[RMDB]
RNA sequence: GGGAACGACUCGAGUAGAGUCGAAAAAUUCAGUUACCUCCCACUAGAUCCCUCCCAUGACAUGUGGGGGAUUAUGGGAACUACAAGAUGAGAUUUGGGUAGGGACACAGCCAAACCAUAUCAUGCCCAUAUUUUUUUAGUAGGACUAUUAAGGAGGUCAGUCGUAUAGCUUCGGCUAUACGACUGAAAAAGAAACAACAACAACAAC
Reactivity to 2A3 in 0.01 (KOAc 150mM, MgCl2 10mM, bicine 150mM(pH8.5), 24C), signal-to-noise 1, nucleotides 027 to 156: a000u120u100c010a010g110u070u110a010c000c000u000c070c030c000a050c020u000a030g040a200u020c010c020c030u010c060c040c000a030u070g100a140c010a140u200g050u020g000g000g010g000g040a070u010u010a020u010g000g000g000a060a050c000u070a010c070a080a060g070a290u070g030a010g020a070u130u070u000g030g000g030u050a020g160g090g050a070c190a020c070a130g220c090c030a170a110a060c000c010a020u070a000u120c050a070u080g020c050c000c000a000u000a010u070u050u000u000u020u020u020a090g000u000a000g000g100a000c000u000a000u160u040a140a070g020g000a000g040g010